[RMDB]
RNA sequence: GGGAACGACUCGAGUAGAGUCGAAAACUUAGAAGAUGUGGACAUCCAAUACCCAACUGGAGCAAAUGUUUACACUGGAAGUGCUCCCAAUCGUGCAACUCUCGCUAAAGAAAUUGAGCAAGGGUUACAUCACGCACCUAUUCGUAGGUGCGUGAUGAAAAGAAACAACAACAACAAC
Reactivity to DMS in 0.01 (KOAc 150mM, MgCl2 10mM, bicine 150mM(pH8.5), 24C), signal-to-noise 2, nucleotides 027 to 126: c010u010u000a100g000a190a120g020a170u010g020u000g000g000a020c010a020u000c030c040a080a040u010a170c030c010c050a090a180c170u000g030g020a130g010c130a080a180a040u000g000u010u010u000a040c030a030c060u000g040g010a010a050g060u000g020c170u020c020c000c080a070a080u000c200g010u010g010c130a000a000c000u000c000u000c000g010c010u000a070a100a050g000a080a110a100u030u000g000a010g020c000a000a040g010g000g000u000u000a120
Reactivity to 2A3 in 0.01 (KOAc 150mM, MgCl2 10mM, bicine 150mM(pH8.5), 24C), signal-to-noise 1, nucleotides 027 to 126: c000u020u010a030g030a200a060g080a300u010g000u050g060g010a010c000a000u020c000c020a010a110u090a250c000c010c000a050a110c090u060g010g000a030g000c050a050a050a070u010g010u000u050u020a020c050a010c020u020g030g040a020a040g060u010g000c000u050c000c000c000a010a070u100c110g140u090g100c020a000a030c000u000c000u000c050g000c020u060a100a130a040g090a040a110a100u210u230g000a020g020c000a010a010g000g000g000u000u050a010